[RMDB]
RNA sequence: GGGAACGACUCGAGUAGAGUCGAAAAGAUAUGGAGCUUAUGGAGGCUUUGGUUCCACUUCGGAAACGAAUGAACCAAUGAGCCGUUGAAAUAAGCUCCUAAGUCAAAAGCUAUGUUCGCAUAGCAACUAUAUUUUUGCGUUCGCGCAAAAAUAUAGAAAAGAAACAACAACAACAAC
Reactivity to DMS in 0.01 (KOAc 150mM, MgCl2 10mM, bicine 150mM(pH8.5), 24C), signal-to-noise 2, nucleotides 027 to 126: g000a030u010a300u010g010g020a040g000c000u000u000a010u000g010g000a050g040g000c010u000u000u000g000g000u000u000c040c300a060c190u000u010c000g010g000a090a060a110c010g000a030a080u000g010a030a010c020c010a040a080u000g010a020g010c010c000g000u000u000g000a080a100a010u010a020a000g020c000u000c000c000u000a010a080g000u010c030a090a070a130a120g020c000u000a000u000g000u000u010c200g000c010a020u000a010g000c000a060a130
Reactivity to 2A3 in 0.01 (KOAc 150mM, MgCl2 10mM, bicine 150mM(pH8.5), 24C), signal-to-noise 1, nucleotides 027 to 126: g000a010u040a030u090g010g000a000g010c010u020u000a000u030g020g000a030g010g030c030u050u130u030g030g000u000u000c070c050a160c070u030u000c040g050g000a130a020a020c010g010a040a060u300g010a000a000c050c060a060a170u180g080a050g000c040c000g000u060u020g000a000a020a000u000a000a000g000c000u000c000c000u010a000a000g000u000c010a000a000a140a070g000c000u000a000u020g000u030u140c280g000c090a000u010a000g030c000a020a000
Structure probing data (DMS and 2A3) for a 177-nucleotide construct.
The DMS profile rests on 1,370 reads.
The RNA was probed in 150 mM KOAc, 10 mM MgCl2 and 150 mM bicine (pH 8.5) at 24 C.